[RMDB]
Source information
An RNA of 207 nucleotides, treated with 2A3 and DMS and read out base by base. 2A3 adducts were read by reverse transcription with SuperScript II with manganese. It was measured as part of the RMDB library OK3TST. The RNA was probed in 150 mM KOAc, 10 mM MgCl2 and 150 mM bicine (pH 8.5) at 24 C. DMS adducts were read by reverse transcription with MarathonRT.
RNA sequence: GGGAACGACUCGAGUAGAGUCGAAAAGAGCGUUCAUCACCGUUCAGGUCGCUGGAGACAACAUCGUCCUCAGUGUAGCCGAGGAUGUCUAAUAACAAACCGUCAGUAAUAUUCAGAGUGAAAGCAGAUCAGUAGUUCACGUACUCUUGAGCUCGCCCUUACGAAUGCGAUUCGUCGCAUUCGUAAGAAAAGAAACAACAACAACAAC
Reactivity to 2A3 in 0.01 (KOAc 150mM, MgCl2 10mM, bicine 150mM(pH8.5), 24C), signal-to-noise 5, nucleotides 027 to 156: g040a000g030c030g050u080u070c050a110u100c020a050c090c020g050u130u070c050a030g000g050u040c030g000c030u020g050g010a040g000a020c030a130a050c030a300u180c080g050u000c000c000u010c010a040g010u030g060u110a030g070c030c010g010a070g000g010a020u010g030u030c070u090a100a130u140a230a010c050a150a060a020c010c030g070u050c030a020g020u080a070a090u060a080u180u180c070a030g030a040g070u040g000a050a070a060g000c030a020g020a070u070c030a030g080u120a020g020u070u080c080a030c080g020u060a020c030u020c000u050u100g010a020g040c020u010c030g000c020c000
Reactivity to DMS in 0.01 (KOAc 150mM, MgCl2 10mM, bicine 150mM(pH8.5), 24C), signal-to-noise 2, nucleotides 027 to 156: g000a060g010c020g070u000u000c070a140u000c010a060c120c010g020u010u030c010a190g030g000u000c040g040c010u000g020g020a060g020a070c060a090a090c120a150u000c080g000u000c010c000u000c020a030g000u010g010u000a100g040c020c000g010a100g010g020a110u000g000u000c050u000a130a110u000a130a130c060a030a120a070c090c040g020u000c050a100g030u000a040a080u000a150u010u000c000a120g000a130g030u000g020a060a030a130g000c050a110g000a080u000c050a020g040u000a080g020u000u010c020a080c090g000u000a040c060u000c030u010u010g010a130g000c000u000c010g010c050c070